[RMDB]
RNA sequence: GGGAACGACUCGAGUAGAGUCGAAAAACGGCGCACGCUAGCCCGUAGGGGGCGCAUGCGGAGAACCCGGAAUCCAGUGGCUGACGUGGUGAGAGCAGUGGAAGCCAUCGCACGCGCAAACCCACGCGCUUCCAAAUGCAUUCGUGCAUUUGGAAGCAAAAGAAACAACAACAACAAC
Reactivity to 2A3 in 0.01 (KOAc 150mM, MgCl2 10mM, bicine 150mM(pH8.5), 24C), signal-to-noise 1, nucleotides 027 to 126: a000c060g030g000c020g000c080a050c090g020c070u040a050g070c020c000c020g030u210a160g130g130g000g030g000c020g010c020a010u040g040c000g030g030a030g050a120a120c040c000c000g020g030a020a020u000c000c010a040g130u030g130g000c010u000g020a050c030g050u160g010g060u120g110a120g010a010g040c040a010g000u080g040g080a150a000g040c010c010a020u050c040g020c000a050c000g070c010g000c010a070a050a250c000c010c010a030c000g050c000
Reactivity to DMS in 0.01 (KOAc 150mM, MgCl2 10mM, bicine 150mM(pH8.5), 24C), signal-to-noise 1, nucleotides 027 to 126: a120c050g000g020c060g010c070a050c060g040c060u000a140g030c020c010c000g020u000a080g000g010g000g040g030c020g020c070a020u020g020c020g030g000a130g010a070a140c140c030c040g000g000a080a090u040c110c030a050g010u000g010g010c070u000g000a100c100g040u020g000g040u000g020a100g000a150g020c050a020g040u000g010g000a090a090g010c020c070a100u000c050g020c070a050c060g000c030g000c000a050a100a140c070c000c010a110c110g010c140